[RMDB]
RNA sequence: GGGAACGACUCGAGUAGAGUCGAAAAGGACUCCAACUACGGCAGUGUCUUUCUCCCUUGUAGACGACGGGGAUGUGAAUUGCCUGAAGUCCAUAAACCGAUCGCCACCACGCUGCAGGGGAAUCACUGCGGCCCGAUGAUUCGUCAUCGGGCCGCAAAAAGAAACAACAACAACAAC
Reactivity to 2A3 in 0.01 (KOAc 150mM, MgCl2 10mM, bicine 150mM(pH8.5), 24C), signal-to-noise 1, nucleotides 027 to 126: g000g000a000c000u030c000c000a080a020c090u300a000c030g040g150c000a000g020u060g040u030c010u100u080u120c140u000c000c000c000u000u050g040u000a010g000a300c010g000a000c000g010g000g000g100a010u040g100u000g150a220a050u090u010g030c000c000u040g090a000a000g020u000c000c000a000u120a000a110a070c060c000g140a040u040c100g020c010c020a080c010c000a000c000g000c020u030g000c000a000g050g000g000g040a030a110u030c000a070c070